[RMDB]
RNA sequence: GGGAACGACUCGAGUAGAGUCGAAAAGGUGGUUAUGCUUCUGCUCCUGUUUAUUCGCAAGCUCACAGCAUGAGAUUGCCUAUUGUUAUUCAUGAGCAGAAUGCUCGUGCUGGAAUGGCAAAUAAACACUGCUCACGUAUUUCGAUACGUGAGCAGUAAAAGAAACAACAACAACAAC
Reactivity to 2A3 in 0.01 (KOAc 150mM, MgCl2 10mM, bicine 150mM(pH8.5), 24C), signal-to-noise 4, nucleotides 027 to 126: g080g000u070g010g060u070u090a090u300g020c010u020u030c010u020g010c000u000c000c000u040g010u000u040u010a060u040u060c020g000c040a010a030g010c010u000c010a110c040a050g110c020a040u070g000a030g010a020u000u040g010c010c010u120a170u130u180g160u220u080a130u160u110c010a030u030g010a010g000c000a000g040a090a020u050g000c000u040c030g060u070g010c010u000g060g100a150a090u100g120g000c010a010a060a030u090a020a090a000c060
Reactivity to DMS in 0.01 (KOAc 150mM, MgCl2 10mM, bicine 150mM(pH8.5), 24C), signal-to-noise 2, nucleotides 027 to 126: g040g020u000g040g000u000u010a100u060g000c060u010u000c020u000g000c090u000c000c000u030g020u020u000u000a220u000u000c270g090c000a010a020g000c040u020c000a200c170a160g010c150a300u000g000a040g000a020u000u000g000c010c030u060a020u000u000g010u020u000a060u000u000c020a010u000g000a120g000c010a070g000a060a100u020g000c010u000c130g000u000g050c000u000g010g060a080a010u030g000g000c020a060a030a050u000a000a030a080c280